Structure probing data (2A3 and DMS) for a 177-nucleotide construct.
Reactivities are given for positions 27 through 126.
2A3 adducts were read by reverse transcription with SuperScript II with manganese.
For 2A3, 1,481 sequencing reads were counted.

RNA sequence: GGGAACGACUCGAGUAGAGUCGAAAAGGUCGCAUCUUCGGAUGCGACCAAAGAACCUCAUAGUGACGCAAACUUCCGCGUCAGAAGGAGGAAACGAGGUAAAAAGUGCACCCUUCGGGGUGCACAACGAAAUAACUGACUUCGGUCAGUUAUUUCGAAAAGAAACAACAACAACAAC
Reactivity to 2A3 in 0.01 (KOAc 150mM, MgCl2 10mM, bicine 150mM(pH8.5), 24C), signal-to-noise 1, nucleotides 027 to 126: g010g010u010c020g000c020a030u040c030u100u110c230g100g000a010u030g000c000g030a000c000c000a000a010a000g000a020a050c010c000u000c000a020u050a050g210u040g010a010c000g010c010a110a250a200c100u260u110c120c060g000c000g000u010c000a000g020a010a010g110g020a020g030g000a070a080a000c080g040a060g020g110u180a060a100a070a050a030g000u000g000c000a000c000c020c000u060u040c270g030g000g010g000u000g000c000a000c000a000a000
Reactivity to DMS in 0.01 (KOAc 150mM, MgCl2 10mM, bicine 150mM(pH8.5), 24C), signal-to-noise 2, nucleotides 027 to 126: g010g040u010c000g010c010a010u000c000u000u020c260g030g010a000u000g060c030g040a030c000c000a010a010a060g020a150a080c000c000u010c010a120u000a150g020u010g000a010c020g010c010a080a090a110c260u020u010c240c140g010c010g010u000c000a030g010a090a090g000g000a050g000g010a100a040a110c180g000a060g000g000u010a070a040a080a160a080g000u010g000c020a010c000c010c000u040u000c190g000g000g000g010u000g010c010a000c000a010a060
2A3 is a SHAPE reagent: it acylates the 2'-hydroxyl of flexible nucleotides of all four kinds. The data come from the RNA Mapping Database (RMDB), library M2PK50.